Chemical mapping of a 207-nucleotide RNA with DMS and 2A3.
It was measured as part of the RMDB library RSTRND.
Conditions: 150 mM KOAc, 10 mM MgCl2 and 150 mM bicine (pH 8.5), 24 C.
2A3 adducts were read by reverse transcription with SuperScript II with manganese.

[RMDB]
RNA sequence: GGGAACGACUCGAGUAGAGUCGAAAAGUGCCGAAACGACUUGUGGCCGGGGUAAUGACCUGGGGUAUAGUAAAAACGCGCCAGAUGACACAAUGGACAAUCCGCAGCCAAGUCCUAAGGUGCAGGAGACUUCUCUCCUGCACUAUGGAUGCAGUUCGCAUAGAUACAUCUUCGGAUGUAUCUAUGCAAAAGAAACAACAACAACAAC
Reactivity to DMS in 0.01 (KOAc 150mM, MgCl2 10mM, bicine 150mM(pH8.5), 24C), signal-to-noise 1, nucleotides 027 to 156: g000u000g010c000c020g030a060a090a100c060g030a060c040u000u000g000u000g030g010c020c010g010g000g020g000u000a070a100u010g030a040c010c010u000g000g000g020g010u010a040u000a100g000u000a060a100a020a080a090c100g000c040g000c020c010a080g020a070u010g000a100c050a060c050a080a120u000g020g000a110c050a110a100u000c010c020g000c050a100g000c030c020a060a200g020u000c000c010u000a050a170g010g030u000g000c000a030g000g000a050g000a050c190u000u000c110u000c000u000c020c000u000g010c000a000c000u000a080u010g020g010a030u010g000c050a030g000u000u000c020
Reactivity to 2A3 in 0.01 (KOAc 150mM, MgCl2 10mM, bicine 150mM(pH8.5), 24C), signal-to-noise 5, nucleotides 027 to 156: g040u050g030c010c020g060a070a090a040c070g060a040c030u060u070g020u060g080g030c010c030g000g000g000g020u090a090a080u120g070a070c010c020u020g000g010g020g020u070a070u070a080g090u110a030a070a050a030a050c040g010c000g020c020c010a010g010a030u100g040a030c020a000c020a110a090u080g030g020a000c000a030a050u030c030c030g000c050a010g010c020c020a040a030g020u000c000c000u060a110a060g010g000u000g000c000a000g020g010a010g010a040c120u290u060c090u110c000u000c140c000u000g000c000a000c000u000a000u050g020g000a010u080g000c030a040g030u090u150c060